RNA sequence: GGGAACGACUCGAGUAGAGUCGAAAAUGAGACAAACACGCUUCACAAUGUGCGGCAAAGAAACAUUGUUUAUGCAAAGGCACUUCGCAAUGUGUGCUCAAACAUUCCUUAUUCAAACACGCUUCACAAAAGAAUCAGUGGUUCGCCACUGAUUCAAGACUAGGGUAGCCUUCGGGCUACCCUAGUCAAAAGAAACAACAACAACAAC
Reactivity to 2A3 in 0.01 (KOAc 150mM, MgCl2 10mM, bicine 150mM(pH8.5), 24C), signal-to-noise 1, nucleotides 027 to 156: u090g030a010g000a030c040a000a210a010c100a080c100g000c000u060u100c020a030c010a000a200u080g000u000g000c000g040g070c030a090a010a140g040a000a060a000c000a000u000u040g030u090u190u090a010u040g020c040a030a050a090g110g000c000a020c000u070u060c200g000c160a180a220u120g000u010g010u010g070c030u000c010a020a020a020c030a030u000u040c010c030u290u110a090u100u210c120a010a130a070c000a060c060g090c000u290u150c030a090c020a110a110a020a070g030a030a000u000c000a000g000u000g000g230u060u130c140g000c020c000a000c000u000g020a000u000u000c000a000a000